[RMDB]
RNA sequence: GGGAACGACUCGAGUAGAGUCGAAAAUUUGAAUUAAGAAGUACAAUAAAGUUAACUUCAUUAGACAAAAAGAAAAAACAAGGAAGAAUAGUACAUAGUUAUAAAUACUUGGAGAGUGAGGUGUAAUUAUACAUCGAAAAUUCGUUUUCGAUGUAUAAAAAGAAACAACAACAACAAC
Reactivity to DMS in 0.01 (KOAc 150mM, MgCl2 10mM, bicine 150mM(pH8.5), 24C), signal-to-noise 4, nucleotides 027 to 126: u010u020u010g010a070a100u020u020a040a060g010a030a020g000u020a040c080a090a130u040a110a090a170g000u000u030a060a030c010u000u000c000a110u010u010a030g000a150c020a010a030a040a070a060g020a010a070a110a040a060a070c080a030a020g000g010a060a080g000a070a040u020a050g000u020a080c090a080u020a080g010u020u020a130u010a060a050a050u010a260c010u020u000g000g010a060g000a050g010u010g000a050g000g010u010g010u010a050a070u000
Reactivity to 2A3 in 0.01 (KOAc 150mM, MgCl2 10mM, bicine 150mM(pH8.5), 24C), signal-to-noise 3, nucleotides 027 to 126: u130u050u090g040a010a120u100u060a090a020g010a010a000g020u020a030c040a020a130u200a300a120a050g050u030u120a040a000c010u040u010c010a080u070u110a040g040a020c040a030a000a000a030a060g120a050a180a050a000a000a010c100a060a000g000g030a030a060g030a050a120u050a030g050u010a030c030a080u070a040g010u060u010a050u070a120a050a060u150a130c030u030u030g040g000a040g020a020g110u060g030a030g080g070u070g000u020a010a000u000
Structure probing data (DMS and 2A3) for a 177-nucleotide construct. For 2A3 the reverse transcriptase was SuperScript II with manganese. It was measured as part of the RMDB libraries RFM100 and RFMREP.